Source: RMDB library M2RFPK, as collected in RNAgym. An RNA of 207 nucleotides, treated with DMS and 2A3 and read out base by base. For 2A3 the reverse transcriptase was SuperScript II with manganese. For DMS, 5,474 sequencing reads were counted. Reactivities are given for positions 27 through 156.
[RMDB]
RNA sequence: GGGAACGACUCGAGUAGAGUCGAAAAUCAUCAAGAAGUAGGCUUAGGCCAAUUGCUUGGUGGUGAAAGUAGAGGGAAGGUAGCACUUCGACGCCUCUAAGUACGCUGUGGGAAUAGUGCUUAAAUCAAAAGCACAGCGACUUCGGUCGCUGUGCAACAUUAGGCAGAUGUUCGCAUCUGCCUAAUGAAAAGAAACAACAACAACAAC
Reactivity to DMS in 0.01 (KOAc 150mM, MgCl2 10mM, bicine 150mM(pH8.5), 24C), signal-to-noise 3, nucleotides 027 to 156: u000c010a020u010c020a050a020g000a050a050g050u000a120g020g030c020u000u000a200g070g020c020c010a060a050u020u010g020c010u000u020g010g050u010g000g060u000g010a070a040a160g010u000a060g010a070g020g020g010a130a070g020g000u000a110g020c070a130c050u000u000c040g020a080c020g030c030c000u000c080u010a040a110g010u000a060c050g000c030u000g040u000g000g030g000a080a100u020a080g010u000g000c030u000u000a050a120a190u000c080a060a040a100a190g050c000a030c000a020g040c000g010a020c000u000u000c250g060g030u000c000g040c000u000g020u000g020c020a020a010
Reactivity to 2A3 in 0.01 (KOAc 150mM, MgCl2 10mM, bicine 150mM(pH8.5), 24C), signal-to-noise 5, nucleotides 027 to 156: u020c000a000u000c000a000a010g020a090a020g050u080a060g030g000c010u090u090a110g130g000c010c020a040a100u040u040g020c010u000u010g010g010u000g000g000u010g040a080a040a010g060u080a010g010a020g010g030g020a060a020g030g020u060a020g020c030a010c060u030u020c040g060a060c040g070c010c010u030c030u040a060a040g050u040a040c080g020c120u080g000u090g060g020g040a040a070u040a080g030u020g020c030u030u110a070a080a070u140c080a060a050a030a000g020c000a000c000a010g010c000g000a000c000u010u050c140g070g000u000c000g000c000u000g000u000g000c000a000a000